This 177-nucleotide RNA was probed chemically with 2A3 and DMS. For DMS the reverse transcriptase was MarathonRT.
RNA sequence: GGGAACGACUCGAGUAGAGUCGAAAACAAAAUAAUUUUACGCCGCUGAGGCAUGCGCGUGCGCUCUGUCAGCAUGCCGAGCAGCGGGCGGAACGCACGCUCGUUCCCAACUCUACUCGAGAAAAAAGAACAGCAUAAUGUUCGCAUUAUGCUGUUCAAAAGAAACAACAACAACAAC
Reactivity to 2A3 in 0.01 (KOAc 150mM, MgCl2 10mM, bicine 150mM(pH8.5), 24C), signal-to-noise 3, nucleotides 027 to 126: c010a010a110a060a070u300a080a110u100u140u110u160a090c090g000c010c010g000c110u180g060a020g050g000c000a010u070g010c040g000c010g050u050g030c030g050c070u070c080u070g070u060c010a020g000c070a180u040g000c060c110g090a080g040c000a010g000c010g000g010g000c000g000g000a000a010c030g000c050a050c070g040c030u030c030g000u020u030c000c000c000a000a010c000u000c000u000a000c010u030c000g000a010g020a060a040a010a000a010a030
Reactivity to DMS in 0.01 (KOAc 150mM, MgCl2 10mM, bicine 150mM(pH8.5), 24C), signal-to-noise 2, nucleotides 027 to 126: c190a120a110a020a120u000a100a090u000u000u000u020a150c070g010c020c010g020c100u000g000a200g000g000c000a030u000g010c100g010c060g010u000g010c020g040c150u000c040u000g000u000c010a130g000c000a050u000g000c000c090g020a110g030c020a020g000c000g000g000g030c020g000g000a020a050c020g010c060a020c070g010c080u000c000g010u000u000c010c000c040a170a030c000u010c000u000a000c000u000c010g000a030g000a000a060a060a010a100a070

The DMS profile rests on 1,165 reads. The 2A3 profile rests on 2,843 reads. For 2A3 the reverse transcriptase was SuperScript II with manganese. Conditions: 150 mM KOAc, 10 mM MgCl2 and 150 mM bicine (pH 8.5), 24 C.